Overview:
This 177-nucleotide RNA was probed chemically with DMS and 2A3. Conditions: 150 mM KOAc, 10 mM MgCl2 and 150 mM bicine (pH 8.5), 24 C. It was measured as part of the RMDB library OK1LIB.

RNA sequence: GGGAACGACUCGAGUAGAGUCGAAAAUGGUAACCGUAAACCUGCCCGGUCAUUCAGAACAGCCAGAAGAAGCUUGCUGAUCUCCUCCUCAUCAGAAAGGUUUCAAUCGUACUUAACGUGACAGCUGCACUAUGAUCCUAUUCGUAGGAUCAUAGUGAAAAGAAACAACAACAACAAC
Reactivity to DMS in 0.01 (KOAc 150mM, MgCl2 10mM, bicine 150mM(pH8.5), 24C), signal-to-noise 9, nucleotides 027 to 126: u020g000g010u010a060a110c070c060g000u020a060a090a060c030c010u000g010c020c020c010g010g010u010c050a070u020u020c070a070g010a090a120c100a060g010c040c050a110g010a110a110g000a060a070g020c010u000u010g010c020u000g010a040u010c060u010c030c020u000c020c010u000c050a070u000c040a050g010a070a100a060g010g000u010u000u010c030a080a090u010c040g000u010a070c110u010u030a070a060c090g010u010g000a100c110a070g000c040u010g010
Reactivity to 2A3 in 0.01 (KOAc 150mM, MgCl2 10mM, bicine 150mM(pH8.5), 24C), signal-to-noise 9, nucleotides 027 to 126: u150g020g020u050a060a050c030c020g030u040a080a020a050c010c010u030g020c020c010c000g000g030u070c050a060u110u060c030a010g050a130a070c010a020g030c040c020a040g020a140a010g050a030a020g160c020u050u070g010c010u050g030a090u020c010u020c020c000u010c000c010u040c010a090u020c010a040g120a090a110a020g060g000u010u050u050c050a070a070u050c030g020u030a060c060u150u130a100a050c030g030u030g070a010c020a040g050c030u050g000